Chemical mapping of a 177-nucleotide RNA with 2A3 and DMS. For DMS the reverse transcriptase was MarathonRT. The DMS profile rests on 2,067 reads. The 2A3 profile rests on 3,043 reads. Reactivities are given for positions 27 through 126. It was measured as part of the RMDB library RFM100.
RNA sequence: GGGAACGACUCGAGUAGAGUCGAAAAAAAGCGGUUCGCUAUGCCGGGGCCACUGUGAACCCUGCCGCCUGCCGGAACACUCUUCGCUCCGGACCAGCUCAGCCUCUGAUAAGCUGGACUCGGCACGCCACCUACCACGAUUCGUCGUGGUAGGUGGAAAAGAAACAACAACAACAAC
Reactivity to 2A3 in 0.01 (KOAc 150mM, MgCl2 10mM, bicine 150mM(pH8.5), 24C), signal-to-noise 2, nucleotides 027 to 126: a010a000a010g040c040g010g030u020u030c030g010c050u040a040u160g030c000c030g030g010g000g020c030c000a080c050u070g000u020g060a060a080c010c010c010u010g020c030c000g020c020c040u060g030c020c020g020g020a030a010c060a020c050u140c050u180u170c100g010c060u020c000c010g010g000a040c010c020a000g000c000u020c030a030g030c050c020u090c040u070g050a110u060a190a030g010c030u000g000g000a030c010u000c010g000g000c020a020c040g030
Reactivity to DMS in 0.01 (KOAc 150mM, MgCl2 10mM, bicine 150mM(pH8.5), 24C), signal-to-noise 2, nucleotides 027 to 126: a040a070a130g000c100g000g030u020u010c010g000c000u000a140u000g000c000c000g000g000g020g000c010c040a050c030u010g050u000g000a100a140c050c010c040u000g030c000c030g000c090c000u010g030c000c000g000g020a070a020c060a100c150u000c140u130u000c090g050c130u010c030c010g020g000a090c030c000a050g000c040u030c040a070g000c010c050u060c120u020g000a020u020a100a040g010c000u050g030g000a030c020u030c070g000g000c060a100c140g000